Chemical mapping of a 177-nucleotide RNA with DMS and 2A3. DMS adducts were read by reverse transcription with MarathonRT.

RNA sequence: GGGAACGACUCGAGUAGAGUCGAAAAGUCACGCGAGCGGCAACGGCUAACGGUGAGUACCCUCACCCUCUGGCCUACCUUAAGAACGGGAUAGUUCUUCAGGCUGUUUGCGGGUUCCGUUAGGUGGCUUAUCGCCGAACUUCGGUUCGGCGAUAAGAAAAGAAACAACAACAACAAC
Reactivity to DMS in 0.01 (KOAc 150mM, MgCl2 10mM, bicine 150mM(pH8.5), 24C), signal-to-noise 2, nucleotides 027 to 126: g000u010c020a010c040g000c020g000a030g000c020g000g000c060a070a020c130g000g000c000u000a010a180c300g030g010u050g000a060g010u020a150c280c250c000u030c000a000c000c000c000u050c040u000g050g020c000c030u040a020c160c000u000u040a000a010g000a000a000c010g010g100g020a130u130a090g000u030u000c000u000u000c110a000g030g060c000u030g000u030u020u000g010c020g040g000g060u000u020c010c000g000u000u010a070g010g030u030g000g000
Reactivity to 2A3 in 0.01 (KOAc 150mM, MgCl2 10mM, bicine 150mM(pH8.5), 24C), signal-to-noise 2, nucleotides 027 to 126: g030u030c020a010c100g040c000g050a000g040c000g110g030c050a100a000c010g000g000c000u040a280a000c050g020g030u000g000a020g000u260a190c090c040c010u000c010a000c000c000c020u000c030u000g000g000c040c000u000a000c010c000u010u000a010a000g000a000a000c030g000g060g200a110u290a200g000u000u000c000u000u010c030a000g030g000c000u030g000u030u020u060g000c000g030g090g000u070u000c010c010g010u020u150a100g030g080u050g030g070
Values cover nucleotides 27 to 126.
Values are in units of 0.01, from 0 to 300, in steps of 10.
The reactions ran in a buffer of 150 mM KOAc, 10 mM MgCl2 and 150 mM bicine (pH 8.5), at 24 C.